[RMDB]
RNA sequence: GGGAACGACUCGAGUAGAGUCGAAAAUUGAGAACUCAGGUUGUCAAUAGUGGCUCAGAUAUGAAUUGUAAUACUCCUACCCAGUGUUACUAUAAUACUACUGGCACGGGUAAGAUUGUGUAUGCUAUACUUAGUGACUGUGAUGGUCUCAAGUACAAAACUACCCUUAGUUCGCUAAGGGUAGUUUAAAAGAAACAACAACAACAAC
Reactivity to 2A3 in 0.01 (KOAc 150mM, MgCl2 10mM, bicine 150mM(pH8.5), 24C), signal-to-noise 3, nucleotides 027 to 156: u040u060g030a010g000a050a010c040u010c170a040g010g120u050u040g050u060c040a010a030u030a190g050u020g050g000c030u020c090a030g080a070u150a100u160g140a080a040u160u130g020u050a060a010u010a050c030u020c040c010u020a040c010c010c040a020g000u000g010u060u030a030c030u030a060u080a300a070u070a110c070u060a040c050u020g020g000c010a010c020g000g000g010u010a030a060g030a040u130u100g000u000g000u050a010u110g010c040u020a020u020a090c030u040u000a030g040u020g100a000c000u010g020u070g110a140u140g030g020u000c000u000c010a000a010g020u010a030c020a010
Reactivity to DMS in 0.01 (KOAc 150mM, MgCl2 10mM, bicine 150mM(pH8.5), 24C), signal-to-noise 3, nucleotides 027 to 156: u000u020g000a080g000a050a070c030u000c090a130g040g030u000u010g020u000c010a070a060u000a090g030u000g020g030c060u010c050a130g010a170u000a090u020g020a090a140u000u000g010u000a020a030u000a020c020u000c010c010u010a090c050c040c050a100g040u000g050u000u000a040c050u000a100u000a070a140u010a100c090u000a060c050u020g000g020c010a050c080g040g040g010u010a050a140g000a110u000u010g010u000g000u000a130u010g020c040u000a090u000a030c020u000u010a080g020u000g020a020c010u000g000u010g030a190u000g020g010u000c010u000c020a010a040g020u010a040c080a050